[RMDB]
RNA sequence: GGGAACGACUCGAGUAGAGUCGAAAAACACAACUGUUCUCAACAGUGCAUUUACCGGCAAAACCACUACACGUUAUGAGCGUAGCCAUAGAAUUGACUUGCCUGCUGGCAGCCAAUGGCAAAUCCGUGUUCGUAGGCUUACGCCAAAUGCAACGUCGCUACUUCGCAGAUUCGUCUGCGAAGUAGCAAAAGAAACAACAACAACAAC
Reactivity to 2A3 in 0.01 (KOAc 150mM, MgCl2 10mM, bicine 150mM(pH8.5), 24C), signal-to-noise 1, nucleotides 027 to 156: a000c090a020c010a050a050c100u040g050u070u000c080u000c170a000a010c010a010g050u000g040c040a070u050u120u000a210c060c020g000g010c010a010a000a000a020c000c000a090c050u100a020c090a000c000g130u200u100a050u300g100a050g130c150g120u130a050g000c000c000a030u030a040g190a160a080u150u050g000a050c000u000u040g010c010c000u130g120c070u020g120g000c000a000g030c040c000a030a130u050g000g000c000a000a000a040u000c040c030g060u000g030u040u050c010g040u040a210g000g000c000u010u030a010c040g070c000c000a000a040a000u000g000c000a000a050c070g050u020c080